RNA sequence: GGGAACGACUCGAGUAGAGUCGAAAAGAUGACAAGCCAGCGGCCAAGGGAGGCACUUGGUGGCAGUGGUUACUAGUCAUCGUUGCCAUGCCCCUGCUACUGAUUGUAUCCCUGGUGGGUGCUGUGGCCAUGCCUACGGGUUCGCCCGUAGGCAUGGAAAAGAAACAACAACAACAAC
Reactivity to 2A3 in 0.01 (KOAc 150mM, MgCl2 10mM, bicine 150mM(pH8.5), 24C), signal-to-noise 1, nucleotides 027 to 126: g120a030u130g000a000c000a030a000g120c000c000a000g000c000g020g060c000c020a040a060g000g060g000a040g000g080c000a000c090u010u070g010g020u030g040g000c000a020g010u090g020g050u080u190a120c080u090a090g070u030c000a130u100c150g080u130u200g010c000c000a050u070g000c020c000c000c020u020g000c010u000a030c000u020g040a090u120u000g000u030a020u020c000c010c100u040g120g030u100g040g090g160u070g000c020u030g040u140g010g020
Reactivity to DMS in 0.01 (KOAc 150mM, MgCl2 10mM, bicine 150mM(pH8.5), 24C), signal-to-noise 2, nucleotides 027 to 126: g020a050u000g010a010c050a140a170g020c070c010a020g020c030g000g010c000c020a120a020g010g010g000a040g000g030c040a000c130u000u000g000g020u000g010g000c000a030g010u000g030g010u010u020a100c220u020a100g000u000c030a060u010c150g010u010u000g030c010c050a190u020g000c040c020c020c000u000g000c010u000a000c020u000g000a060u000u010g020u010a170u000c000c000c000u000g000g040u010g010g010g030u000g000c000u000g010u000g020g000
Structure probing data (2A3 and DMS) for a 177-nucleotide construct. For DMS, 2,034 sequencing reads were counted. For DMS the reverse transcriptase was MarathonRT. Values cover nucleotides 27 to 126.